[RMDB]
RNA sequence: GGGAACGACUCGAGUAGAGUCGAAAAUUACGCGGCGACUUCUUGACCGAGGUGCCCUUCACCGGAGGCAGCGUACCGGCGGUGAUGCUCAUCGGUGCGUGCUGAGAAGAGUUAUGAAGAGAGUGGACACGUCCGCAUGAUUCGUCAUGCGGACGUGAAAAGAAACAACAACAACAAC
Reactivity to DMS in 0.01 (KOAc 150mM, MgCl2 10mM, bicine 150mM(pH8.5), 24C), signal-to-noise 1, nucleotides 027 to 126: u070u040a030c150g000c120g070g020c000g040a050c040u000u010c090u000u000g000a040c050c020g010a150g010g000u000g020c010c050c020u010u000c000a040c060c030g000g100a150g040g000c010a120g070c170g000u030a000c010c000g000g000c120g000g000u020g010a090u000g000c090u040c070a000u000c110g010g010u030g040c020g110u000g000c020u000g000a250g000a090a090g000a100g030u020u030a040u030g000a040a000g000a040g000a030g050u000g000g000a290
Reactivity to 2A3 in 0.01 (KOAc 150mM, MgCl2 10mM, bicine 150mM(pH8.5), 24C), signal-to-noise 2, nucleotides 027 to 126: u190u050a120c060g000c060g030g010c060g060a020c030u050u000c030u100u030g080a060c000c000g000a020g030g000u050g000c020c000c000u030u150c060a050c010c000g070g030a100g010g000c020a050g000c070g080u060a090c000c000g090g000c020g070g040u150g050a050u160g080c030u010c030a040u020c000g000g000u050g040c060g000u000g020c010u080g000a030g000a080a000g000a010g020u170u140a110u300g060a100a030g070a000g050a070g060u070g000g080a020
The data come from the RNA Mapping Database (RMDB), library OK1LIB. Chemical mapping of a 177-nucleotide RNA with DMS and 2A3. The DMS profile rests on 1,284 reads. 2A3 adducts were read by reverse transcription with SuperScript II with manganese. For DMS the reverse transcriptase was MarathonRT. DMS (dimethyl sulfate) methylates the pairing face of unpaired adenines and cytosines.